Structure probing data (2A3 and DMS) for a 177-nucleotide construct. Reactivities are given for positions 27 through 126. The RNA was probed in 150 mM KOAc, 10 mM MgCl2 and 150 mM bicine (pH 8.5) at 24 C. Values are in units of 0.01, from 0 to 300, in steps of 10.
RNA sequence: GGGAACGACUCGAGUAGAGUCGAAAAGAGGGCAUCCAGGUACCCUCACGAGCGGGGUACCCUUAGGCUGCAAGACGGCUGGCGGCACAACCCUCAGGCCUCGAACUGCAAACACUCCACCGUUUAACAUCUACGUAGCAUUCGUGCUACGUAGAUGAAAAGAAACAACAACAACAAC
Reactivity to 2A3 in 0.01 (KOAc 150mM, MgCl2 10mM, bicine 150mM(pH8.5), 24C), signal-to-noise 3, nucleotides 027 to 126: g080a020g000g000g030c020a030u000c030c010a020g000g040u000a020c000c010c000u020c020a060c110g070a040g010c130g020g000g000g010u010a000c010c000c000u060u070a040g030g010c010u000g010c050a020a050g100a030c030g020g030c050u030g030g020c010g010g050c050a020c030a070a060c010c000c010u040c030a010g030g060c020c000u030c030g040a140a050c030u050g010c030a060a070a010c020a020c030u030c010c010a060c010c030g070u040u070u120a050a020
Reactivity to DMS in 0.01 (KOAc 150mM, MgCl2 10mM, bicine 150mM(pH8.5), 24C), signal-to-noise 3, nucleotides 027 to 126: g020a060g000g010g020c060a050u020c030c120a110g020g000u000a010c000c000c020u010c060a150c150g010a150g000c160g010g000g000g000u000a010c010c010c060u000u000a090g020g010c050u000g010c030a100a140g000a140c030g000g000c020u010g000g020c090g000g020c030a040c110a100a100c030c010c010u000c040a070g010g020c020c010u000c030g000a050a050c060u000g010c040a080a040a060c110a100c040u000c020c010a100c070c060g010u000u000u000a070a130